[RMDB]
RNA sequence: GGGAACGACUCGAGUAGAGUCGAAAAGAUAUGGAUGUAAUGGUGUUCACAGCGUUGAAAUCGGAAACGAUGGAGCUGUAGACGAGAGUUACAUCCUAAGUCAAAGGAGAGAGUUCGCUCUCUCCAACUCCUAUCGAGACUUCGGUCUCGAUAGGAGAAAAGAAACAACAACAACAAC
Reactivity to 2A3 in 0.01 (KOAc 150mM, MgCl2 10mM, bicine 150mM(pH8.5), 24C), signal-to-noise 1, nucleotides 027 to 126: g050a020u070a080u140g010g020a000u000g010u000a030a000u080g130g000u110g070u190u090c000a000c000a020g010c020g230u300u080g000a080a060a000u000c010g000g000a090a010a000c020g000a030u020g000g000a010g040c010u000g060u130a060g040a010c060g000a040g010a020g300u000u000a000c000a010u020c000c000u030a040a040g050u060c060a110a060a170g010g010a020g000a010g010a010g020u120u170c210g010c190u030c010u000c010u010c020c000a000a000